[RMDB]
RNA sequence: GGGAACGACUCGAGUAGAGUCGAAAAUGGCUUAUUUUUGUAUUUUUAGUAGACGGGGUUUCACCAUGUUGGCCACGUGAAACUGGUCUCAAACUCCUGGCUUCAACUGAUCUGCCUGCCUCAGCCAUGCAUAAUAUGGCUUCGGCCAUAUUAUGCAAAAAGAAACAACAACAACAAC
Reactivity to DMS in 0.01 (KOAc 150mM, MgCl2 10mM, bicine 150mM(pH8.5), 24C), signal-to-noise 2, nucleotides 027 to 126: u020g010g020c050u000u000a080u000u000u000u000u010g010u010a040u010u000u030u030u010a080g000u010a020g000a040c090g020g010g020g000u000u000u000c030a060c040c090a060u000g000u000u000g000g010c030c030a080c150g030u000g020a040a100a070c120u000g030g000u010c040u000c070a040a070a120c050u000c000c010u000g030g020c050u000u010c070a050a080c090u000g000a070u000c050u000g010c030c020u000g010c030c010u000c070a070g000c050c040a080

An RNA of 177 nucleotides, treated with DMS and read out base by base.
The data come from the RNA Mapping Database (RMDB), library OK2TRN.
For DMS, 1,738 sequencing reads were counted.
High DMS reactivity at an A or C suggests that its Watson-Crick edge is free.
The RNA was probed in 150 mM KOAc, 10 mM MgCl2 and 150 mM bicine (pH 8.5) at 24 C.